RNA sequence: GGGAACGACUCGAGUAGAGUCGAAAAUGCAAACGGUGGGCAUGUUAUGCUGAAAAGGCUCGAGGGACAAGUCAAGGUACUAGCUAUUUCGUGAGUUCCUCGGGCAAAGGAAAAGACGUUCAAAACAGUUAUAAAUUGGCUUCGGCCAAUUUAUAACAAAAGAAACAACAACAACAAC
Reactivity to DMS in 0.01 (KOAc 150mM, MgCl2 10mM, bicine 150mM(pH8.5), 24C), signal-to-noise 1, nucleotides 027 to 126: u020g020c070a090a060a070c040g000g010u010g020g020g000c050a020u000g020u030u000a050u000g010c030u000g010a030a130a150a060g010g020c000u000c000g020a080g000g000g010a010c000a090a170g020u020c020a060a090g000g000u000a020c020u000a100g020c180u000a050u000u000u000c180g020u000g000a300g000u000u010c000c000u000c050g000g000g000c010a000a040a150g020g020a070a070a100a100g000a050c020g000u000u000c130a050a120a050a060c190a170